[RMDB]
RNA sequence: GGGAACGACUCGAGUAGAGUCGAAAAUGUCGCUUAUAUUGAUGAUGUCGAAUUCUCCCAAUAUCAUCACUGAUGAGUAGCUCAUCUUGUUAUCAGGAUCCAAGCUUUCUAAAGACGUCAUUAAACCUGUCACGUAUUGAUUCGUCAAUACGUGACAAAAAGAAACAACAACAACAAC
Reactivity to DMS in 0.01 (KOAc 150mM, MgCl2 10mM, bicine 150mM(pH8.5), 24C), signal-to-noise 3, nucleotides 027 to 126: u000g020u010c040g000c010u010u020a090u010a140u000u000g010a030u000g000a000u000g030u000c050g010a100a180u010u000c140u000c060c040c040a130a060u010a030u000c030a000u000c030a040c160u020g000a080u000g000a010g010u000a020g010c020u000c160a030u000c010u000u000g010u010u000a160u000c050a010g000g000a090u000c080c200a040a030g010c020u010u010u010c020u000a070a070a100g010a050c040g010u000c010a020u000u010a040a090a130c040c050
Reactivity to 2A3 in 0.01 (KOAc 150mM, MgCl2 10mM, bicine 150mM(pH8.5), 24C), signal-to-noise 3, nucleotides 027 to 126: u060g000u050c010g000c100u090u060a100u050a040u230u160g000a000u010g010a000u020g030u050c080g070a120a220u290u020c040u070c070c010c020a000a010u060a040u020c020a000u010c010a020c100u070g080a110u040g010a030g110u060a020g040c000u020c030a020u000c000u000u040g100u120u050a240u300c020a010g000g040a000u060c060c050a010a010g010c010u060u090u000c030u070a050a050a050g040a070c010g030u000c020a000u010u120a180a090a040c020c020